Structure probing data (DMS and 2A3) for a 207-nucleotide construct.
2A3 adducts were read by reverse transcription with SuperScript II with manganese.
For DMS, 2,343 sequencing reads were counted.
RNA sequence: GGGAACGACUCGAGUAGAGUCGAAAAGUUAGGUGAGGCUCCUAUGCAAACACAGUCCACUGCCCAAAAAUGUCCAAAGACGCCAAUGGGUAGAACAGGGAUUGUCGGAUUAAGGCUUUCCAUAAUGAAAACAAAGUAUGCUUCGGCAUACUUUGAACACAAUAGCGUGGUUCGCCACGCUAUUGUGAAAAGAAACAACAACAACAAC
Reactivity to DMS in 0.01 (KOAc 150mM, MgCl2 10mM, bicine 150mM(pH8.5), 24C), signal-to-noise 1, nucleotides 027 to 156: g030u000u010a090g010g020u000g010a120g000g010c050u000c110c020u000a080u000g000c060a100a050a170c020a010c040a040g030u020c010c030a080c020u010g000c000c000c010a010a020a090a070a040u010g000u010c030c080a090a100a200g020a070c120g040c080c050a050a150u000g010g000g010u010a060g000a130a240c120a090g010g030g000a060u010u000g010u000c010g000g000a140u000u000a060a070g030g000c010u010u000u010c000c040a090u010a060a110u010g000a060a050a100a120c020a010a010a020g010u010a000u000g000c010u000u040c300g110g020c000a010u000a010c000u010u000u000g000a070a170
Reactivity to 2A3 in 0.01 (KOAc 150mM, MgCl2 10mM, bicine 150mM(pH8.5), 24C), signal-to-noise 2, nucleotides 027 to 156: g040u070u030a030g000g050u030g070a030g010g050c050u060c030c040u090a070u180g090c090a080a050a020c020a020c000a030g000u020c020c000a010c020u010g010c000c000c000a040a000a000a000a000u010g000u010c020c020a230a030a080g010a000c010g020c000c010a020a020u040g000g000g000u020a000g000a090a060c060a110g080g000g040a010u000u030g040u030c070g030g010a050u070u130a050a060g020g020c020u070u080u050c040c010a040u080a130a090u170g110a040a080a010a030c020a000a000a000g010u000a000u010g000c010u010u090c190g040g000c010a000u000a000c000u000u010u000g010a010a000